[RMDB]
RNA sequence: GGGAACGACUCGAGUAGAGUCGAAAAUCUUCUUUUGGAAAUACGGUCACAUACCUCAUGUUUUAAUAUUGAUCACAUUCUUCCUAAGUACACAUACAAUUUGUAUCCAUCCAUGUGUCUCAACAUAUAUUCUAUGCAGUGUGUGUCUGGGUAUGCAAUUUACCGUGAGCUUCGGCUCACGGUAAAUAAAAGAAACAACAACAACAAC
Reactivity to 2A3 in 0.01 (KOAc 150mM, MgCl2 10mM, bicine 150mM(pH8.5), 24C), signal-to-noise 2, nucleotides 027 to 156: u040c020u090u000c010u080u070u030u070g060g050a050a090a030u120a090c070g020g000u010c030a040c000a060u060a050c000c030u060c050a040u050g090u010u020u000u150a070a100u100a040u120u110g050a060u150c050a020c000a090u130u070c030u100u080c010c020u050a100a040g070u120a090c070a000c000a010u110a040c050a170a300u080u100u240g060u020a060u070c060c070a030u020c000c020a030u070g030u010g010u060c030u030c150a080a100c050a010u130a000u020a020u160u070c090u050a020u060g070c020a010g020u000g000u000g000u000g020u020c030u010g000g000g090u040a070u090g070c010a050